An RNA of 177 nucleotides, treated with DMS and 2A3 and read out base by base. Reactivities are given for positions 27 through 126. The RNA was probed in 150 mM KOAc, 10 mM MgCl2 and 150 mM bicine (pH 8.5) at 24 C.
[RMDB]
RNA sequence: GGGAACGACUCGAGUAGAGUCGAAAAGCUGUACGCUUCGGCGUACAGCAAAUAAAAUCAGCGGUUAAAAAGCAGGGGUUAUAACCGCUGAACGCCUGCUUAAAAGUACUACCUUCGGGUAGUACAAUCAUAACAUACAGUUCGCUGUAUGUUAUGAAAAAGAAACAACAACAACAAC
Reactivity to DMS in 0.01 (KOAc 150mM, MgCl2 10mM, bicine 150mM(pH8.5), 24C), signal-to-noise 6, nucleotides 027 to 126: g010c000u000g010u000a000c000g010c010u000u010c210g030g010c010g020u000a010c000a010g020c000a000a030a040u000a060a060a140a090u000c010a010g010c000g010g010u000u000a010a060a110a100a100g020c090a100g000g000g010g010u000u000a210u000a010a020c000c010g010c010u000g000a010a050c160g010c000c000u000g010c130u010u000a070a100a120a130g010u000a000c000u000a000c000c000u000u010c190g010g010g010u000a010g000u000a000c000a030a070
Reactivity to 2A3 in 0.01 (KOAc 150mM, MgCl2 10mM, bicine 150mM(pH8.5), 24C), signal-to-noise 7, nucleotides 027 to 126: g000c000u000g010u000a000c000g000c010u040u090c260g120g000c010g000u000a000c000a000g000c000a000a000a000u010a000a010a000a060u010c000a000g000c000g010g020u020u020a060a060a080a070a040g140c110a110g040g020g000g020u050u060a050u010a090a000c000c010g010c000u000g000a010a000c020g050c010c000u070g040c060u180u150a070a130a040a040g000u010a010c000u000a000c010c010u040u070c260g090g010g000u000a000g000u000a000c000a000a000